[RMDB]
RNA sequence: GGGAACGACUCGAGUAGAGUCGAAAAUGUGGAAGUCCUGCUCGGGGCGGAAGCAUUAAAACCAUUCGAGCUAGUCAAUGCGUGGCGUGUCUCUCCGCAGGGUGUUGGCGAAUGUAAAGAGUGACUAUUGACCACGCAACGUUCGCGUUGCGUGGAACACGCUAAAAUUGUUCGCAAUUUUAGCGUGAAAAGAAACAACAACAACAAC
Reactivity to DMS in 0.01 (KOAc 150mM, MgCl2 10mM, bicine 150mM(pH8.5), 24C), signal-to-noise 2, nucleotides 027 to 156: u000g000u030g000g020a300a230g010u000c010c010u000g040c160u000c080g010g000g000g040c000g010g000a300a300g010c020a080u000u000a050a090a090a150c030c010a120u000u000c050g020a050g020c060u010a100g020u000c010a060a090u000g060c040g010u000g000g050c060g030u010g020u000c050u010c030u000c050c010g020c040a130g040g010g040u010g020u000u000g020g020c070g010a090a060u000g020u000a080a090a080g000a100g010u020g030a100c060u000a210u000u000g000a100c010c010a000c000g000c010a010a000c000g000u010u000c260g010c060g040u010u020g000c000g020u010g000g000a060a050
Reactivity to 2A3 in 0.01 (KOAc 150mM, MgCl2 10mM, bicine 150mM(pH8.5), 24C), signal-to-noise 3, nucleotides 027 to 156: u020g000u020g030g020a040a050g030u000c010c010u070g060c080u080c080g020g000g000g000c000g000g010a000a000g010c000a000u070u110a020a010a010a040c030c030a040u080u100c030g010a000g030c020u030a010g060u020c020a040a030u040g040c120g300u070g110g000c010g000u020g020u010c010u000c010u010c040c010g010c040a080g000g040g040u030g000u020u030g010g010c010g040a020a030u120g030u250a040a040a020g020a010g020u030g030a000c010u040a100u100u270g060a110c000c000a000c000g000c000a000a000c010g000u020u030c170g000c010g140u000u000g000c000g000u000g000g000a000a000